Conditions: 150 mM KOAc, 10 mM MgCl2 and 150 mM bicine (pH 8.5), 24 C. An RNA of 170 nucleotides, treated with DMS and read out base by base. High DMS reactivity at an A or C suggests that its Watson-Crick edge is free. Reactivities are given for positions 27 through 129. It was measured as part of the RMDB library 15KLIB. For DMS, 2,934 sequencing reads were counted.
RNA sequence: GGGAACGACUCGAGUAGAGUCGAAAACGGUGAAUCCUCCCCCGGGGGGCCUCUUCCUAGGUCCGGAGUCUAUCUCCAUCUGGUCCGUUCGGGCCCUCUUCGCCGGGGGAGCCCCCUCUCCAUCCUUGAAGGCUCGGCUUCGGCCGAGCCAAAAGAAACAACAACAACAAC
Reactivity to DMS in 0.01 (KOAc 150mM, MgCl2 10mM, bicine 150mM(pH8.5), 24C), signal-to-noise 2, nucleotides 027 to 129: c010g050g000u230g000a060a130u020c020c000u010c000c040c020c000c000g130g000g010g000g030g000c090c000u050c160u050u000c020c060u010a060g150g010u000c030c030g020g000a010g000u060c090u090a290u120c120u010c110c000a180u030c050u050g010g000u000c020c040g000u020u000c120g000g000g030c000c030c000u030c250u030u000c180g020c070c000g070g040g080g000g000a000g020c000c000c030c030c000u000c000u010c010c010a060u030c030c080u000u000g000a230a040